[RMDB]
RNA sequence: GGGAACGACUCGAGUAGAGUCGAAAAGCCGAAAGGCGUAGGCGAUGGACAACAGGUUGAUAUUCCUGUACCACCUCUUCACCGUUUGAACGAUGGGGGGACGCAGGAGGAUAGGGUAAGCGCACUGUCAUACGCCCUCGUUCGCGAGGGCGUAUGAAAAAGAAACAACAACAACAAC
Reactivity to DMS in 0.01 (KOAc 150mM, MgCl2 10mM, bicine 150mM(pH8.5), 24C), signal-to-noise 1, nucleotides 027 to 126: g040c020c000g010a070a110a160g040g030c080g000u000a060g000g030c060g010a040u000g000g020a010c090a090a090c050a030g030g000u000u000g020a140u000a130u000u010c010c000u000g000u000a060c120c070a190c000c010u000c000u000u000c020a040c040c010g020u000u000u020g000a060a050c000g000a040u000g000g010g000g000g000g000a110c190g000c020a010g030g010a070g000g000a110u000a060g010g010g000u000a020a110g020c090g040c120a080c150u000g000

Chemical mapping of a 177-nucleotide RNA with DMS.
The RNA was probed in 150 mM KOAc, 10 mM MgCl2 and 150 mM bicine (pH 8.5) at 24 C.
Source: RMDB library OK2TRN, as collected in RNAgym.
DMS adducts were read by reverse transcription with MarathonRT.
The DMS profile rests on 1,022 reads.
Values are in units of 0.01, from 0 to 300, in steps of 10.